Structure probing data (2A3 and DMS) for a 177-nucleotide construct. The data come from the RNA Mapping Database (RMDB), libraries RFM100 and RFMREP. High 2A3 reactivity points to a flexible backbone, as in loops and unpaired stretches. For DMS the reverse transcriptase was MarathonRT.

[RMDB]
RNA sequence: GGGAACGACUCGAGUAGAGUCGAAAACUUUAUUGUUUCCAAGGACUCUGCUGGAGGAGUCAUACAAACUUCGCCAUUUCUUCCUCUGAUGUCCAUGUGCCAUGAUUGUCUGAGGAAGGGAGAAAAAGAACCGAUCUAGGUUCGCCUAGAUCGGUUCAAAAGAAACAACAACAACAAC
Reactivity to 2A3 in 0.01 (KOAc 150mM, MgCl2 10mM, bicine 150mM(pH8.5), 24C), signal-to-noise 6, nucleotides 027 to 126: c030u110u160u150a200u300u300g040u020u010u020c070c040a060a070g210g000a000c010u000c000u020g010c010u080g110g020a030g020g000a010g010u000c000a020u100a040c060a010a180a040c040u090u070c060g070c090c050a130u010u040u030c000u000u010c010c000u000c020u060g000a000u020g030u030c090c040a070u130g100u160g190c100c020a040u090g020a060u120u170g030u000c000u030g010a000g000g000a000a010g000g000g000a050g060a030a070a010a010a000
Reactivity to DMS in 0.01 (KOAc 150mM, MgCl2 10mM, bicine 150mM(pH8.5), 24C), signal-to-noise 1, nucleotides 027 to 126: c040u000u000u060a130u020u000g020u000u000u000c110c060a260a260g010g000a020c020u050c000u000g000c010u000g000g000a040g000g000a120g000u000c030a080u130a110c210a070a080a020c130u000u000c020g000c030c020a120u010u000u140c000u000u000c000c000u000c030u000g020a020u000g000u000c060c030a240u020g040u030g000c140c080a000u000g010a050u020u060g030u000c040u000g000a010g030g000a010a020g020g000g000a020g000a000a010a070a020a170